RNA sequence: GGGAACGACUCGAGUAGAGUCGAAAAGGUGUGAGAGCACGACCCGCGACAUCGGGACUGAGACACUGCCCGGACUCCUACGGGAGGCUGCAGCAACGAAUCUUCCGCAAUGGGCGCAAGCCUGACGGAUGAAGUCGUCUUUCGAGACGACUUCAUCAAAAGAAACAACAACAACAAC
Reactivity to DMS in 0.01 (KOAc 150mM, MgCl2 10mM, bicine 150mM(pH8.5), 24C), signal-to-noise 2, nucleotides 027 to 126: g040g000u000g000u020g000a100g000a120g010c020a050c040g000a090c050c010c030g010c070g000a130c140a070u020c020g000g020g000a130c080u030g000a070g000a170c090a070c080u000g060c000c200c000g010g010a080c010u040c010c000u000a080c150g000g000g010a040g010g000c040u000g060c010a140g000c120a080a030c130g000a090a120u000c010u000u010c020c000g000c150a080a040u070g030g010g000c000g000c170a090a150g000c020c020u000g010a090c190g030
Reactivity to 2A3 in 0.01 (KOAc 150mM, MgCl2 10mM, bicine 150mM(pH8.5), 24C), signal-to-noise 3, nucleotides 027 to 126: g070g000u020g000u020g050a070g000a030g010c020a000c080g080a100c020c000c000g020c050g020a040c010a100u180c020g010g010g020a040c020u080g090a010g010a070c020a010c060u070g030c000c010c000g010g060a030c020u010c010c020u060a070c120g070g000g010a020g010g000c020u070g010c030a040g000c010a040a050c020g030a030a070u000c030u040u010c010c000g010c080a060a110u080g010g020g000c020g000c060a070a040g010c000c050u040g060a050c060g040